Chemical mapping of a 177-nucleotide RNA with 2A3 and DMS. The data come from the RNA Mapping Database (RMDB), library M2PK50. Conditions: 150 mM KOAc, 10 mM MgCl2 and 150 mM bicine (pH 8.5), 24 C.
RNA sequence: GGGAACGACUCGAGUAGAGUCGAAAACUGCUCCGGUUCGCCGGAGCAGAAAUGGAUCCAAUGGAAUCCAAAAUGCAAAUGGAGAUCCAAUAAGGGAUAACAAAACCAGGAUGUUCGCAUCCUGGAAGAAUGUAUGCGUGUUCGCACGCAUACAUUCAAAAGAAACAACAACAACAAC
Reactivity to 2A3 in 0.01 (KOAc 150mM, MgCl2 10mM, bicine 150mM(pH8.5), 24C), signal-to-noise 1, nucleotides 027 to 126: c000u000g000c000u000c000c010g050g030u050u080c200g010c000c000g000g010a010g010c000a000g000a000a000a000u040g030g030a020u000c040c000a000a110u070g010g030a000a050u050c020c020a010a080a180a080u300g070c100a020a080a070u040g020g000a040g040a210u020c000c000a000a000u140a100a040g140g000g000a030u070a100a090c050a020a070a010a050c010c010a000g000g000a000u010g000u050u030c160g000c040a010u000c000c000u000g000g020a000a030
Reactivity to DMS in 0.01 (KOAc 150mM, MgCl2 10mM, bicine 150mM(pH8.5), 24C), signal-to-noise 1, nucleotides 027 to 126: c000u000g000c000u000c000c000g000g010u000u010c190g070c000c000g010g000a000g060c010a000g000a010a060a060u000g000g000a040u000c000c000a260a160u030g000g000a020a300u000c000c000a030a070a090a070u000g010c300a090a110a140u010g000g010a000g000a240u000c000c000a000a090u000a120a110g000g020g000a050u000a080a080c110a080a090a060a230c000c000a020g030g030a000u000g000u000u020c210g060c000a000u000c000c000u000g010g010a060a020